Source: RMDB library OK3TST, as collected in RNAgym. This 207-nucleotide RNA was probed chemically with 2A3. 2A3 adducts were read by reverse transcription with SuperScript II with manganese. The 2A3 profile rests on 416 reads. The reactions ran in a buffer of 150 mM KOAc, 10 mM MgCl2 and 150 mM bicine (pH 8.5), at 24 C.

RNA sequence: GGGAACGACUCGAGUAGAGUCGAAAACUCGCGCGAACAUGGAGGCGUGGAGCGCGACAUGAAUCAGCCUCUAUUAGAUUAAUGGUCGACAGAUCAGCGGCGAUCAGCGACCUAAUUAGAAGCCGCCACCGGAAGAGGAGACGCUCGACGGACGUCACAUAGUAGCGGCUUUCGAGCCGCUACUAUGAAAAGAAACAACAACAACAAC
Reactivity to 2A3 in 0.01 (KOAc 150mM, MgCl2 10mM, bicine 150mM(pH8.5), 24C), signal-to-noise 1, nucleotides 027 to 156: c000u010c000g000c000g030c000g050a290a030c000a080u090g000g000a060g000g080c060g050u020g020g000a040g000c020g000c020g030a000c050a060u120g030a040a030u090c030a130g000c030c000u000c000u080a160u010u190a030g100a080u050u210a090a190u200g000g000u000c030g000a170c020a160g000a000u000c000a080g020c000g020g010c000g010a000u000c000a020g050c000g080a000c000c000u010a050a000u090u100a020g080a120a010g000c000c000g000c000c000a090c060c010g090g000a080a080g000a110g040g000a100g000a080c040g010c000u000c130g100a110c000g100g020a020c030g000u030c000a000